[RMDB]
RNA sequence: GGGAACGACUCGAGUAGAGUCGAAAAUGUGGCAUAAAAGAUGUUGUUCUACAAGGCUUAAAAGCUUGUUGUUACGUGGGUGUGCAAACUGUUGAAGAUCUGCGUGCUCGCAUGACAUAUGUAUGCCGGAUGUAGAUAUUCGUAUCUACAAAAAGAAACAACAACAACAAC
Reactivity to 2A3 in 0.01 (KOAc 150mM, MgCl2 10mM, bicine 150mM(pH8.5), 24C), signal-to-noise 9, nucleotides 027 to 129: u140g030u090g040g000c030a040u090a080a150a040a080g070a090u090g010u030u000g000u000u010c010u010a040c030a040a020g060g000c020u140u230a050a090a040a030g070c000u030u040g040u030u020g020u020u030a030c050g010u020g010g000g010u030g020u010g030c010a010a060a060c050u080g110u230u230g100a090a040g020a180u040c020u020g000c010g020u020g020c010u010c010g010c020a020u130g000a000c010a010u060a010u060g090u020a020u090g020c000c000g020g000a040
Reactivity to DMS in 0.01 (KOAc 150mM, MgCl2 10mM, bicine 150mM(pH8.5), 24C), signal-to-noise 5, nucleotides 027 to 129: u020g010u010g030g000c000a020u020a040a070a090a080g030a060u040g030u000u000g000u000u000c040u030a090c010a070a060g020g020c000u040u020a080a070a070a150g030c020u000u000g000u030u030g000u000u000a010c090g010u010g010g010g000u020g020u020g000c040a010a020a080c040u020g000u100u030g020a170a040g000a140u040c100u000g010c000g000u020g030c030u010c000g010c040a120u020g020a050c040a020u010a000u010g040u010a000u020g000c000c000g000g000a170
An RNA of 170 nucleotides, treated with 2A3 and DMS and read out base by base. The data come from the RNA Mapping Database (RMDB), library 15KLIB. Conditions: 150 mM KOAc, 10 mM MgCl2 and 150 mM bicine (pH 8.5), 24 C. For 2A3 the reverse transcriptase was SuperScript II with manganese. For DMS, 77,817 sequencing reads were counted.